Source information
The record gives the reactivity of an RNA of 207 nucleotides to 2A3 and DMS. DMS adducts were read by reverse transcription with MarathonRT. 2A3 adducts were read by reverse transcription with SuperScript II with manganese. Source: RMDB library OK3TST, as collected in RNAgym.
RNA sequence: GGGAACGACUCGAGUAGAGUCGAAAACUCGCUCAAACAUACAGAGGUGUUGUGCGAGAUGAAUCUCUCUGCAUUAGAAUGGUCGAAGAAUCAGCGGCAAUUCGAGACCAAAUUAGAAGCCGCAUUAACAGCUUUGGAACACGCCUUGCUGACGUGACAUACUCCCAUACUUCGGUAUGGGAGUAUGAAAAGAAACAACAACAACAAC
Reactivity to 2A3 in 0.01 (KOAc 150mM, MgCl2 10mM, bicine 150mM(pH8.5), 24C), signal-to-noise 3, nucleotides 027 to 156: c000u010c000g000c000u010c020a120a110a030c010a030u180a090c140a070g050a030g040g080u040g010u020u010g000u010g000c000g000a030g010a030u120g030a080a110u020c030u000c000u000c030u130g040c080a090u040u120a090g080a180a120u090g010g010u000c000g000a100a020g020a040a060u030c050a090g010c000g000g000c000a020a010u000u000c010g020a010g000a020c000c000a050a090a060u130u060a020g070a160a030g020c020c000g030c030a020u020u100a120a030c020a010g020c040u120u190u180g050g010a070a030c030a010c080g020c010c010u030u050g010c010u020g030a020c010g030u040g020a010
Reactivity to DMS in 0.01 (KOAc 150mM, MgCl2 10mM, bicine 150mM(pH8.5), 24C), signal-to-noise 2, nucleotides 027 to 156: c010u000c010g020c010u000c040a100a030a080c010a110u000a300c030a190g020a200g050g060u000g010u000u000g000u000g020c040g010a040g060a070u000g010a100a090u020c080u000c020u010c010u000g000c070a160u010u000a100g010a080a140u000g050g010u010c000g010a170a180g000a080a050u000c060a070g000c000g010g050c020a060a100u000u000c010g040a300g030a190c020c010a030a080a110u000u000a290g010a040a050g000c000c000g000c050a230u000u000a040a120c070a050g010c040u000u010u000g000g010a110a090c030a060c010g010c000c030u000u000g010c090u010g000a050c020g010u020g010a300